An RNA of 177 nucleotides, treated with 2A3 and DMS and read out base by base. Reactivities are given for positions 27 through 126. For DMS the reverse transcriptase was MarathonRT. For DMS, 1,845 sequencing reads were counted.
RNA sequence: GGGAACGACUCGAGUAGAGUCGAAAAAAUCUGCUUAAGAAGUUGAUUGGCGGUGAUGUCACUCCAGUUGACCAAUACAUGUGUGGCGUUGAUGGAAAACCCAUUAGUGCCUACGCAUUUUUAAUGGGAUUUUAUUCAAGUUCGCUUGAAUAAAAUCAAAAGAAACAACAACAACAAC
Reactivity to 2A3 in 0.01 (KOAc 150mM, MgCl2 10mM, bicine 150mM(pH8.5), 24C), signal-to-noise 2, nucleotides 027 to 126: a000a000u060c020u070g030c010u040u040a120a070g080a130a020g100u020u010g020a010u010u010g020g030c100g000g080u020g020a140u300g280u300c010a000c010u000c010c010a030g010u000u000g030a060c000c000a040a110u080a100c080a020u040g000u000g000u000g020g000c020g010u010u000g000a000u000g000g000a000a050a060a060c000c000c000a010u000u000a000g020u010g020c000c020u010a010c010g000c000a000u110u030u030u090u190a140a140u100g100g030
Reactivity to DMS in 0.01 (KOAc 150mM, MgCl2 10mM, bicine 150mM(pH8.5), 24C), signal-to-noise 2, nucleotides 027 to 126: a100a010u010c030u010g030c100u000u000a070a090g000a100a170g010u000u000g000a030u000u000g000g000c300g020g010u000g010a240u030g000u010c050a050c010u000c000c010a050g010u000u000g010a060c000c050a020a060u020a080c270a030u000g030u000g030u000g010g000c020g000u000u010g010a000u000g010g020a070a120a120a250c300c000c000a000u010u000a020g000u000g000c000c010u000a020c010g010c000a010u000u000u020u020u010a040a070u010g000g010